[RMDB]
Notes:
This 170-nucleotide RNA was probed chemically with 2A3 and DMS.
RNA sequence: GGGAACGACUCGAGUAGAGUCGAAAAGGGACCCCACUUCAGCAGGGUCCGCGUUCCAUCCUUUCUUACCUGAUGGCCGGCAUGGUCCCAGCCUCCUCGCUGGCGCCGGCUGGGCAACAUUCCGAGGGCAUGUCUCAGUUCGCUGAGACAAAAAGAAACAACAACAACAAC
Reactivity to 2A3 in 0.01 (KOAc 150mM, MgCl2 10mM, bicine 150mM(pH8.5), 24C), signal-to-noise 9, nucleotides 027 to 129: g040g000g010a020c010c000c030c010a040c050u270u240c080a070g030c020a040g020g020g000u000c010c000g010c030g020u030u020c010c000a060u060c030c010u090u190u100c030u090u100a160c030c020u090g070a090u110g110g010c010c010g010g020c050a110u140g080g030u110c010c000c020a020g000c000c010u080c010c010u070c030g010c030u020g020g000c040g000c000c000g030g000c000u000g000g000g000c010a060a030c000a100u110u050c020c010g020a030g000g020g020c040a050
Reactivity to DMS in 0.01 (KOAc 150mM, MgCl2 10mM, bicine 150mM(pH8.5), 24C), signal-to-noise 9, nucleotides 027 to 129: g030g000g020a040c000c020c000c040a030c140u020u060c140a100g040c120a110g000g000g000u020c020c000g000c000g030u010u010c030c030a140u050c040c070u030u040u020c050u030u020a090c090c030u010g020a110u060g000g000c030c000g010g010c030a080u000g010g010u030c250c000c010a090g030c000c090u040c110c070u030c130g000c020u020g020g010c250g010c030c010g000g000c000u050g000g010g010c060a060a090c120a120u010u040c090c050g020a040g000g000g000c220a000
For DMS the reverse transcriptase was MarathonRT. The data come from the RNA Mapping Database (RMDB), library 15KLIB.